[RMDB]
RNA sequence: GGGAACGACUCGAGUAGAGUCGAAAACGGUCCAACUAGAUCGAAUGAAGGUUCGACUGCUUGAUGUUUUGCUGGGUUUAUGUGACUACGAUACGGAGGGCCGCACACUUCGAAACAUCGAUGACUAAAUCAUCCUGCAGUUCGCUGCAGGAUGAUUAAAAGAAACAACAACAACAAC
Reactivity to 2A3 in 0.01 (KOAc 150mM, MgCl2 10mM, bicine 150mM(pH8.5), 24C), signal-to-noise 5, nucleotides 027 to 126: c040g070g030u050c030c020a030a050c030u050a040g050a200u030c000g070a050a010u160g100a190a020g200g000u000u000c010g030a030c000u000g010c010u060u100g010a060u030g080u010u050u010u030g040c080u050g000g000g110u040u160u090a130u170g070u090g020a000c010u040a080c100g040a080u050a110c060g030g060a010g030g020g000c020c000g040c010a030c000a000c000u020u010c030g000a050a070a050c020a040u040c010g070a070u120g020a060c040u120a020
Reactivity to DMS in 0.01 (KOAc 150mM, MgCl2 10mM, bicine 150mM(pH8.5), 24C), signal-to-noise 3, nucleotides 027 to 126: c090g020g010u000c000c030a090a120c080u000a110g000a080u020c000g050a060a020u000g000a180a050g000g000u000u000c080g040a060c020u000g000c140u000u050g000a050u000g000u000u000u010u010g030c100u060g000g000g010u000u010u000a070u140g020u020g000a070c000u020a090c060g000a110u020a110c130g010g000a120g000g020g000c000c000g000c050a020c080a090c050u000u000c040g040a040a070a040c110a050u030c080g010a080u020g020a070c180u020a060

Structure probing data (2A3 and DMS) for a 177-nucleotide construct. Reactivities are given for positions 27 through 126. Source: RMDB library OK1LIB, as collected in RNAgym. The RNA was probed in 150 mM KOAc, 10 mM MgCl2 and 150 mM bicine (pH 8.5) at 24 C. For 2A3, 2,901 sequencing reads were counted.